[RMDB]
RNA sequence: GGGAACGACUCGAGUAGAGUCGAAAAAGGGCAGGGUGAAAUUCCCGAUCGGCGGUAAAGUCCGCGAGCCGAACGAAAAAGGUUUGGGAGGAACCGGUGAGAUUCCGGUACCGACAGUAUAGUCUGGAUGACCACUUCAGCUUCGGCUGAAGUGGAACGCUAAAAACUGGUUCGCCAGUUUUUAGCGAAAAGAAACAACAACAACAAC
Reactivity to DMS in 0.01 (KOAc 150mM, MgCl2 10mM, bicine 150mM(pH8.5), 24C), signal-to-noise 1, nucleotides 027 to 156: a130g000g000g000c070a170g000g010g040u040g000a070a210a180u020u000c000c000c000g040a110u000c010g030g000c060g040g030u000a140a140a040g050u000c000c000g000c030g010a300g020c000c020g050a060a300c040g020a030a090a050a160a100g010g030u010u000u000g000g010g030a180g000g000a030a020c010c000g010g000u010g010a300g000a300u000u000c000c000g000g000u000a000c000c000g080a080c040a040g010u000a220u000a030g000u000c000u000g020g000a180u000g000a180c070c000a040c020u030u000c000a000g030c000u000u020c300g040g040c000u000g050a050a000g030u020g000g000a000a040

Record summary: Source: RMDB library M2RFPK, as collected in RNAgym. Structure probing data (DMS) for a 207-nucleotide construct. Values cover nucleotides 27 to 156. For DMS, 1,515 sequencing reads were counted.